An RNA of 207 nucleotides, treated with 2A3 and read out base by base. Values are in units of 0.01, from 0 to 300, in steps of 10. Conditions: 150 mM KOAc, 10 mM MgCl2 and 150 mM bicine (pH 8.5), 24 C.

RNA sequence: GGGAACGACUCGAGUAGAGUCGAAAAAGCAGAUAAAGAACCAGAAGAAAUAGCAGACAUUUUGGAUGAGUCAGUAUCUUUAGUAAAGACGGCUUUAGAGUAUCAACCAAGCACAGAUUCACUCAAUAAGGUUGUAUAUGCAUCUGGAGCUAAUGAACUGAGUAGUACCGUUCGCGGUACUACUCAGAAAAGAAACAACAACAACAAC
Reactivity to 2A3 in 0.01 (KOAc 150mM, MgCl2 10mM, bicine 150mM(pH8.5), 24C), signal-to-noise 1, nucleotides 027 to 156: a000g000c010a010g060a120u160a240a080a000g060a090a170c010c010a020g000a010a000g000a000a090a060u070a000g000c020a000g040a160c010a110u000u150u140u030g020g000a000u040g000a010g040u040c040a000g000u020a190u150c140u090u060u120a020g000u040a000a070a100g020a000c040g010g000c040u010u010u000a000g040a000g140u010a010u060c000a000a010c020c000a020a020g110c120a090c030a110g090a030u170u050c010a100c070u110c000a060a000u200a200a020g000g000u010u000g010u040a010u000a000u300g120c000a100u000c000u000g000g040a000g000c000u030a000a170u170g030a120a040